[RMDB]
RNA sequence: GGGAACGACUCGAGUAGAGUCGAAAAGAUAUGGAAGGGUGUAAGAGCGAGGAUCACGUUGAUUCGGAAACGAAUCACCGUGGGAGCUUAUCACCCUUCCUAAGUCAAACACCUCUUCGGAGGUGAACCUGCAUACGUACUUCGGUACGUAUGCAGGAAAAGAAACAACAACAACAAC
Reactivity to DMS in 0.01 (KOAc 150mM, MgCl2 10mM, bicine 150mM(pH8.5), 24C), signal-to-noise 2, nucleotides 027 to 126: g010a010u000a300u020g000g000a010a010g020g000g040u000g050u010a110a300g000a010g030c020g040a160g030g000a070u000c000a000c000g000u000u000g000a000u000u010c000g000g000a080a080a170c020g020a010a000u000c010a010c040c000g000u000g020g000g010a060g010c000u000u000a300u010c000a000c000c010c010u000u040c000c000u000a000a040g000u000c020a170a120a300c010a000c000c010u000c000u000u010c230g010g000a040g000g010u000g000a040a070
Reactivity to 2A3 in 0.01 (KOAc 150mM, MgCl2 10mM, bicine 150mM(pH8.5), 24C), signal-to-noise 1, nucleotides 027 to 126: g030a010u050a050u100g000g000a000a000g030g080g030u030g020u200a300a300g040a020g140c010g030a260g100g050a050u030c000a000c000g000u000u010g000a010u010u000c000g000g000a040a080a040c000g020a000a000u010c010a000c010c030g000u000g020g010g000a010g010c000u010u020a040u100c020a010c010c000c010u000u000c000c000u000a000a000g000u000c000a000a030a060c020a010c010c000u030c000u000u070c250g150g020a010g000g020u020g000a010a030
The record gives the reactivity of an RNA of 177 nucleotides to DMS and 2A3.
For 2A3 the reverse transcriptase was SuperScript II with manganese.
DMS adducts were read by reverse transcription with MarathonRT.
The reactions ran in a buffer of 150 mM KOAc, 10 mM MgCl2 and 150 mM bicine (pH 8.5), at 24 C.